RNA sequence: GGGAACGACUCGAGUAGAGUCGAAAAACGGGCAGUGGCGAUGGCAACGCGGCAGCCGCAGGGUCGACUUCUUCGCAGCCGCAACAGACGGGCCACGGGCAAAGAGGGGUGCUCGUUCUGUUGGAAGGUGGUAUAGUGAUUUCGAUCACUAUACCACAAAAGAAACAACAACAACAAC
Reactivity to 2A3 in 0.01 (KOAc 150mM, MgCl2 10mM, bicine 150mM(pH8.5), 24C), signal-to-noise 9, nucleotides 027 to 126: a000c040g000g030g010c040a060g030u050g090g010c040g050a090u060g040g030c030a070a010c050g010c020g060g000c020a010g040c010c010g010c030a040g040g020g020u040c020g050a060c030u060u030c010u040u030c060g010c050a040g040c020c020g030c010a010a020c010a010g030a010c010g000g020g000c020c020a040c020g010g040g000c110a150a110a010g080a070g040g030g010g010u070g000c010u010c010g030u170u040c010u010g020u000u000g020g010a060a030g120
Reactivity to DMS in 0.01 (KOAc 150mM, MgCl2 10mM, bicine 150mM(pH8.5), 24C), signal-to-noise 3, nucleotides 027 to 126: a080c070g010g000g020c090a050g020u020g000g000c070g000a100u000g020g020c080a070a060c090g020c060g010g040c070a070g000c030c040g010c060a080g010g000g000u020c050g020a080c070u000u010c050u000u020c030g020c040a060g000c030c020g020c020a060a030c020a020g000a040c000g000g000g010c030c080a090c090g020g010g000c070a050a090a130g000a120g010g000g000g010u010g010c000u000c030g010u020u010c040u010g000u000u000g000g030a060a060g030
Chemical mapping of a 177-nucleotide RNA with 2A3 and DMS.